[RMDB]
RNA sequence: GGGAACGACUCGAGUAGAGUCGAAAAUAUAGUACCGAUGAGGAACGAGCUUUUGUUCGUACAGAGCUUGCUGCUCUGCUCGCUAGUCCUCUGCUGAUCGAUGCUAUUGAUCAGCUGAACCCAGCGUAUUGAACACUGCUCAUUGCCGGUGGUGGCUCCAGAUGGUGAUGUUCGCAUCACCAUCUGGAAAAGAAACAACAACAACAAC
Reactivity to 2A3 in 0.01 (KOAc 150mM, MgCl2 10mM, bicine 150mM(pH8.5), 24C), signal-to-noise 2, nucleotides 027 to 156: u300a040u090a050g060u060a050c000c030g030a100u140g040a050g030g060a030a030c030g000a010g010c000u000u000u120u290g020u040u040c030g000u010a130c000a030g020a000g000c010u050u130g060c050u120g000c010u000c000u020g030c040u010c000g000c000u010a020g000u010c040c030u030c030u020g000c000u000g000a000u000c010g030a030u100g300c050u200a140u110u070g000a000u000c000a000g010c030u020g030a040a050c020c000c000a000g000c010g000u100a050u100u180g000a010a000c000a000c000u000g010c020u000c020a060u120u190g070c000c000g060g000u080g060g030u040g030g010c000u000
Structure probing data (2A3) for a 207-nucleotide construct. Conditions: 150 mM KOAc, 10 mM MgCl2 and 150 mM bicine (pH 8.5), 24 C. The data come from the RNA Mapping Database (RMDB), library PDB130.